[RMDB]
RNA sequence: GGGAACGACUCGAGUAGAGUCGAAAAGAACUCACCAGCAAAUGUUUACGACUAGAUUCGACAUUUGCAAAUUACGUAGCGAUCUUCCAGAAUCUUGUCGAAACGUUCCCAAUCGCUACGCCCUAAACUUGAAGUGGAAGUUCGCUUCCACUUCAAGAAAAGAAACAACAACAACAAC
Reactivity to DMS in 0.01 (KOAc 150mM, MgCl2 10mM, bicine 150mM(pH8.5), 24C), signal-to-noise 1, nucleotides 027 to 126: g020a110a120c100u010c080a080c090c090a120g000c030a020a010a010u010g000u000u000u010a200c040g000a050c020u000a100g010a090u000u000c050g000a020c090a020u010u010u000g020c080a070a050a080u000u000a080c010g020u000a010g000c010g000a010u000c060u000u020c090c120a050g000a020a010u000c020u000u000g040u000c040g020a020a040a190c090g000u010u010c000c000c000a090a000u000c010g010c000u000a010c000g000c020c030c040u000a000a040a180
Reactivity to 2A3 in 0.01 (KOAc 150mM, MgCl2 10mM, bicine 150mM(pH8.5), 24C), signal-to-noise 2, nucleotides 027 to 126: g030a020a000c030u030c020a040c020c030a020g000c030a040a030a050u090g050u060u150u130a030c020g030a000c020u080a070g030a060u050u020c010g040a020c060a100u040u090u100g000c020a020a010a020u110u060a020c020g000u010a000g040c000g000a000u000c020u180u070c150c030a040g030a010a030u010c020u070u030g060u050c020g080a200a110a040c020g010u000u000c020c000c000a000a020u000c050g020c030u000a010c000g030c000c000c000u180a140a080a080
About this RNA: The record gives the reactivity of an RNA of 177 nucleotides to DMS and 2A3. Source: RMDB library M2PK90, as collected in RNAgym. DMS adducts were read by reverse transcription with MarathonRT.